[RMDB]
RNA sequence: GGGAACGACUCGAGUAGAGUCGAAAAGCCGUAAAACUACCCGCAAUCAAUAAACGCAAACAACGCAAACUACGCUCCCGCUUACGCCAAAGCUGCGUAAGUCUAACUCUUCGGAGCCGUCAAGCCUCACAAUGCUAACUAGUGGGGAUUUGGCGUACGUUGACACCAAGUUCGCUUGGUGUCAACGAAAAGAAACAACAACAACAAC
Reactivity to 2A3 in 0.01 (KOAc 150mM, MgCl2 10mM, bicine 150mM(pH8.5), 24C), signal-to-noise 1, nucleotides 027 to 156: g060c010c000g000u010a000a020a030a090c030u040a050c030c030c000g000c030a010a050u080c020a070a210u180a200a130a030c050g000c090a060a170a150c090a070a030c060g000c000a050a070a120c020u110a040c110g010c000u010c000c000c000g040c000u000u010a010c000g000c000c020a280a140a000g070c230u070g000c110g000u000a000a000g000u000c000u010a040a040c000u030c050u250u100c100g060g000a040g030c040c000g000u000c000a010a000g040c000c000u050c030a000c000a000a090u150g090c060u170a130a240c030u020a040g000u000g000g000g000g000a000u000u000u000g000g000c000g000u020a010